[RMDB]
RNA sequence: GGGAACGACUCGAGUAGAGUCGAAAAGACAAGAAGAAACCAUUCAGGAAGUGCUUCCUUCUGCUCGGGGAGAUACAUGAGUAUACAGUAGUUCGAGUCCUGUGUGCUGAUGUUGUCUUCUCGGCUCUUUUGUGACAUCACAAGUGUAACCUAGAGACGUAGGUGCGUAUUUCGAUACGCACCUACGAAAAGAAACAACAACAACAAC
Reactivity to 2A3 in 0.01 (KOAc 150mM, MgCl2 10mM, bicine 150mM(pH8.5), 24C), signal-to-noise 2, nucleotides 027 to 156: g070a020c050a000a050g090a050a000g040a030a060a030c060c020a040u110u050c060a050g160g000a120a050g050u030g060c080u020u050c020c000u070u080c090u090g040c110u130c040g010g000g020g010a000g020a010u020a000c000a000u100g130a010g010u020a000u000a000c000a010g090u190a000g030u080u190c210g070a070g130u110c020c020u000g030u000g000u000g020c000u000g020a000u010g010u210u110g000u000c000u000u000c000u000c000g000g010c000u000c020u000u130u010u050g050u050g070a060c040a120u170c020a050c020a100a030g010u000g000u060a050a040c020c010u040a030g020a000g010a100

Chemical mapping of a 207-nucleotide RNA with 2A3. For 2A3 the reverse transcriptase was SuperScript II with manganese. It was measured as part of the RMDB library OK3TST. The RNA was probed in 150 mM KOAc, 10 mM MgCl2 and 150 mM bicine (pH 8.5) at 24 C. Reactivities are rounded to 0.1 and cut off at 0 and 3.